[RMDB]
RNA sequence: GGGAACGACUCGAGUAGAGUCGAAAAACCGCUUCGUCAACGAAAGCCUGUCGUACCACGACUUCGCCAUCGCCAUGAUGCAGGCAUGCCAGGACGACGACGAGGCCACGGUCUGGCUGCUGUGCGACACCAGUGGGAGGUUCGCCUCCCACUGGUGAAAAGAAACAACAACAACAAC
Reactivity to 2A3 in 0.01 (KOAc 150mM, MgCl2 10mM, bicine 150mM(pH8.5), 24C), signal-to-noise 3, nucleotides 027 to 126: a000c020c010g000c020u010u030c020g070u040c040a100a080c040g070a150a030a010g020c010c020u030g030u070c030g020u040a130c030c020a040c100g050a010c000u100u030c080g040c010c000a050u030c010g030c050c010a140u220g060a060u100g090c040a020g040g020c000a010u180g030c000c020a010g020g030a040c030g020a030c060g010a000c050g030a060g050g000c030c000a020c030g040g000u000c010u010g030g000c000u010g000c010u080g030u070g040c020g030a010
Reactivity to DMS in 0.01 (KOAc 150mM, MgCl2 10mM, bicine 150mM(pH8.5), 24C), signal-to-noise 3, nucleotides 027 to 126: a160c030c060g030c060u020u000c040g050u000c050a110a100c140g000a100a090a080g000c000c060u010g010u000c040g030u000a080c080c070a130c110g000a100c100u000u010c080g000c020c020a050u000c030g010c030c020a160u000g000a070u020g000c070a190g000g000c060a030u010g000c020c000a020g010g000a050c040g000a090c100g000a020c050g010a030g020g030c010c100a080c050g000g010u000c030u010g010g020c020u000g000c020u000g010u010g000c000g020a150
Source: RMDB library OK2TST, as collected in RNAgym. Structure probing data (2A3 and DMS) for a 177-nucleotide construct. The reactions ran in a buffer of 150 mM KOAc, 10 mM MgCl2 and 150 mM bicine (pH 8.5), at 24 C. The DMS profile rests on 2,101 reads. For 2A3, 3,239 sequencing reads were counted. Values cover nucleotides 27 to 126.